This 207-nucleotide RNA was probed chemically with 2A3. 2A3 adducts were read by reverse transcription with SuperScript II with manganese.
RNA sequence: GGGAACGACUCGAGUAGAGUCGAAAACAGAGUUUCUCUGUUCUCUAAAAUAAAAACAGAGUGGUGGAGUCAUUAUGACCCUCUUAGAGUUUCCAGUUUCUCUAAAAAACUGGUGGCGAGCCUGCUCAAAAUCAUUAGACCUUCGGGUCUAAUGAAAGAACGGAAAUAUGUUCGCAUAUUUCCGUUCAAAAGAAACAACAACAACAAC
Reactivity to 2A3 in 0.01 (KOAc 150mM, MgCl2 10mM, bicine 150mM(pH8.5), 24C), signal-to-noise 1, nucleotides 027 to 156: c100a000g000a000g000u010u010u020c000u000c000u000g010u030u000c000u000c000u010a210a300a190a210u090a010a030a060a030a000c000a010g000a000g000u000g050g010u010g000g070a280g020u000c000a030u000u300a110u300g030a030c000c040c000u000c010u100u180a030g000a000g030u000u020u010c000c010a000g010u000u000u050c020u010c050u100a100a000a000a000a000a000c010u020g020g000u000g010g000c020g020a040g050c000c150u050g020c000u020c060a060a190a020a020u020c000a000u020u010a010g000a000c000c020u010u050c240g160g000g000u000c000u040a000a000u000g010a000a000a000